[RMDB]
RNA sequence: GGGAACGACUCGAGUAGAGUCGAAAAGAUGAGGUUAAGAACUAGAGAGAACUUGAGACGCGUGAUGACGCUCAAGAGAAAACGCGAGAAUGAGCAAGUGUGCUAGACGAAGCACACAAGAGGAAGACCAGCUGAUAUACUUCGGUAUAUCAGCUGGAAAAGAAACAACAACAACAAC
Reactivity to DMS in 0.01 (KOAc 150mM, MgCl2 10mM, bicine 150mM(pH8.5), 24C), signal-to-noise 3, nucleotides 027 to 126: g000a040u020g000a070g000g010u010u020a040a040g050a110a030c110u020a070g020a080g000a130g010a060a120c030u000u000g000a050g020a100c040g050c080g000u020g000a190u020g000a180c030g040c010u000c010a020a010g010a110g010a060a040a170a050c130g010c150g000a080g000a060a060u030g000a050g010c070a070a190g000u000g010u000g010c010u030a000g000a170c270g010a130a070g000c000a010c000a000c000a030a040g020a200g000g000a040a080g030a150
Reactivity to 2A3 in 0.01 (KOAc 150mM, MgCl2 10mM, bicine 150mM(pH8.5), 24C), signal-to-noise 3, nucleotides 027 to 126: g150a020u080g020a050g020g060u150u130a080a090g010a040a030c040u090a050g000a000g010a040g000a150a050c000u000u020g000a000g130a130c030g000c000g020u150g090a160u240g040a060c000g010c000u000c000a020a000g030a000g000a020a070a000a000c030g000c020g080a020g030a060a080u120g020a000g060c030a060a160g040u000g000u000g000c010u010a000g020a060c080g140a130a010g000c000a000c000a000c000a000a010g050a010g080g010a010a010g000a010
Structure probing data (DMS and 2A3) for a 177-nucleotide construct. Conditions: 150 mM KOAc, 10 mM MgCl2 and 150 mM bicine (pH 8.5), 24 C. Source: RMDB library OK1LIB, as collected in RNAgym.